[RMDB]
The record gives the reactivity of an RNA of 177 nucleotides to DMS and 2A3. DMS (dimethyl sulfate) methylates the pairing face of unpaired adenines and cytosines. DMS adducts were read by reverse transcription with MarathonRT. The RNA was probed in 150 mM KOAc, 10 mM MgCl2 and 150 mM bicine (pH 8.5) at 24 C.
RNA sequence: GGGAACGACUCGAGUAGAGUCGAAAAUCGUGAGAUGUGGUGCCUCACGCGCUCGAGGCGUCCGUGGUCAGAGAGACCACUGACGCAAAAACUCGAGCGCAAAUAAAUAGCAUUACAUCGAGAAUAACAGGUAUAAUAAUUUCGAUUAUUAUACCUGAAAAGAAACAACAACAACAAC
Reactivity to DMS in 0.01 (KOAc 150mM, MgCl2 10mM, bicine 150mM(pH8.5), 24C), signal-to-noise 6, nucleotides 027 to 126: u020c080g010u040g000a170g010a020u000g020u000g020g000u000g010c000c120u010c190a120c200g010c000g000c000u000c010g010a000g010g000c010g000u010c010c090g000u000g000g000u000c010a200g040a180g010a200g010a020c000c000a010c000u000g000a020c000g020c030a040a030a050a100a300c000u000c000g000a010g010c010g000c010a010a020a040u010a050a110a080u050a150g010c000a000u000u010a010c000a020u010c010g000a140g000a110a070u040a070a180
Reactivity to 2A3 in 0.01 (KOAc 150mM, MgCl2 10mM, bicine 150mM(pH8.5), 24C), signal-to-noise 6, nucleotides 027 to 126: u130c040g020u070g100a130g000a020u010g000u010g010g000u000g000c010c010u110c020a100c130g000c000g000c000u000c000g000a000g000g000c000g000u000c000c010g000u000g000g000u000c050a040g130a040g010a010g000a300c000c000a000c000u000g000a000c000g000c000a030a070a050a050a050c000u000c000g000a000g000c000g000c000a000a000a000u050a010a040a050u150a010g000c000a000u000u010a000c000a000u010c010g020a030g060a070a070u160a090a030